[RMDB]
RNA sequence: GGGAACGACUCGAGUAGAGUCGAAAACUGGCGUUAAGUUGUAAUGUAGUAUAAAUCAUACAAUUCUUGUAGUACAUCAUAUAUAGCACUGAAUUACCAAAUUCCUGAUAAAUAAGGAAAGGGUGGAGCAGAAAGAAUAGUUCGCUAUUCUUUCUGCAAAAGAAACAACAACAACAAC
Reactivity to DMS in 0.01 (KOAc 150mM, MgCl2 10mM, bicine 150mM(pH8.5), 24C), signal-to-noise 2, nucleotides 027 to 126: c040u000g010g020c160g000u000u000a080a160g010u000u000g010u000a100a030u000g000u000a090g020u030a060u010a020a080a100u020c150a170u010a060c060a030a090u010u000c050u000u000g020u000a060g030u020a020c030a080u010c070a070u000a090u000a100u010a140g000c010a090c040u000g000a120a030u010u000a070c020c030a050a120a110u000u000c010c000u000g000a130u020a040a110a100u010a120a050g000g000a000a010a150g000g010g040u010g010g010a230
About this RNA
Structure probing data (DMS) for a 177-nucleotide construct. Reactivities are rounded to 0.1 and cut off at 0 and 3. For DMS the reverse transcriptase was MarathonRT. The DMS profile rests on 1,293 reads. Source: RMDB library RFMREP, as collected in RNAgym. Reactivities are given for positions 27 through 126.